[RMDB]
RNA sequence: GGGAACGACUCGAGUAGAGUCGAAAAAGAUGUUGAGUGGCCUGAAACGCCGCAGCGCGUUCAUCCACACGAAUAGCACUGAUUUUUUGUGCAUCGUCGACUCUGUCGAGCAUGACAAAAGGCGUGCUGUUCCUCGGUGAUUCGUCACCGAGGAACAAAAAGAAACAACAACAACAAC
Reactivity to DMS in 0.01 (KOAc 150mM, MgCl2 10mM, bicine 150mM(pH8.5), 24C), signal-to-noise 2, nucleotides 027 to 126: a120g010a050u000g010u000u020g020a150g040u000g010g000c300c300u000g000a050a060a030c090g010c000c030g030c150a060g010c080g030c010g000u000u000c010a020u000c020c020a020c090a050c100g040a120a070u000a080g020c000a020c010u000g010a090u010u000u000u010u030u000g010u000g000c000a040u000c120g010u000c000g000a040c030u000c020u000g000u000c010g010a000g030c080a110u000g010a090c030a020a050a080a090g010g010c030g020u000g000c080
Reactivity to 2A3 in 0.01 (KOAc 150mM, MgCl2 10mM, bicine 150mM(pH8.5), 24C), signal-to-noise 1, nucleotides 027 to 126: a000g100a030u140g020u150u100g110a100g060u010g000g000c040c060u020g130a130a070a000c010g000c010c000g130c100a040g000c100g030c000g050u000u000c020a020u000c010c010a020c030a000c070g060a070a090u080a080g030c010a000c030u070g150a230u010u000u040u080u110u030g000u030g020c010a010u010c070g090u030c020g020a000c010u060c110u260g020u010c010g010a050g000c110a020u110g030a030c030a010a080a020a100g050g040c020g020u030g000c000
The record gives the reactivity of an RNA of 177 nucleotides to DMS and 2A3. 2A3 adducts were read by reverse transcription with SuperScript II with manganese. The 2A3 profile rests on 907 reads. Conditions: 150 mM KOAc, 10 mM MgCl2 and 150 mM bicine (pH 8.5), 24 C.